[RMDB]
RNA sequence: GGGAACGACUCGAGUAGAGUCGAAAAACCAUUAGCGCCCGAUUUCGAAUAGGUAAAUCCCUACUUUCCAUGACAUAAAUAAAGGACAAAACGCCGAGCCAUCAGUAUGACGGCACAGCGUUUUGUGCUACAUCGCUGUUUUCGAACAGCGAUGUAGAAAAGAAACAACAACAACAAC
Reactivity to DMS in 0.01 (KOAc 150mM, MgCl2 10mM, bicine 150mM(pH8.5), 24C), signal-to-noise 4, nucleotides 027 to 126: a130c090c000a090u080u000a090g010c050g000c030c020c010g020a090u010u010u020c040g000a070a070u020a080g010g000u020a050a070a070u010c070c000c010u000a070c040u000u000u000c030c000a090u020g020a080c130a070u040a070a080a080u030a070a070a050g000g020a040c000a000a000a000a020c000g020c000c030g000a080g000c000c000a050u000c000a150g030u040a070u020g000a010c060g010g010c000a070c030a030g010c000g010u010u000u000u000g000u000g000
Reactivity to 2A3 in 0.01 (KOAc 150mM, MgCl2 10mM, bicine 150mM(pH8.5), 24C), signal-to-noise 6, nucleotides 027 to 126: a000c000c000a050u040u100a040g030c010g020c030c010c020g070a070u030u070u100c060g040a120a060u040a140g030g040u090a070a090a060u050c020c000c010u030a090c020u070u050u000c020c030a080u100g090a110c030a050u240a100a140a010u250a090a130a040g100g020a010c010a000a000a000a000c000g000c010c000g020a010g010c030c000a010u030c010a020g290u220a280u300g030a020c030g010g000c020a010c020a060g010c010g000u000u000u000u000g000u000g010
An RNA of 177 nucleotides, treated with DMS and 2A3 and read out base by base. Source: RMDB libraries RFM100 and RFMREP, as collected in RNAgym.